[RMDB]
RNA sequence: GGGAACGACUCGAGUAGAGUCGAAAAACGCGUAGUUACGACUACGCGACCCCAGGCCACAUGCUUCUUUAUAUCCUCAUAGAUAUCUCAGCACUAUGGAAUGUAAGGAAGUGUGUGGUUUUGGCAAGUUGGAUCGUGUCUUCGGACACGAUCCAACAAAAGAAACAACAACAACAAC
Reactivity to 2A3 in 0.01 (KOAc 150mM, MgCl2 10mM, bicine 150mM(pH8.5), 24C), signal-to-noise 2, nucleotides 027 to 126: a000c000g010c000g000u000a010g000u010u050a240c260g010a000c100u000a000c070g000c000g080a050c020c000c000c000a000g000g000c000c000a010c000a030u030g000c000u000u000c000u000u000u000a030u000a020u030c000c040u090c020a010u000a000g070a060u090a260u140c090u100c090a100g120c130a100c040u000a000u010g000g000a020a050u010g000u000a000a000g010g000a000a000g000u000g000u000g000u000g000g020u000u000u060u030g000g000c060a000a050
The data come from the RNA Mapping Database (RMDB), library RFM100.
This 177-nucleotide RNA was probed chemically with 2A3.
Values cover nucleotides 27 to 126.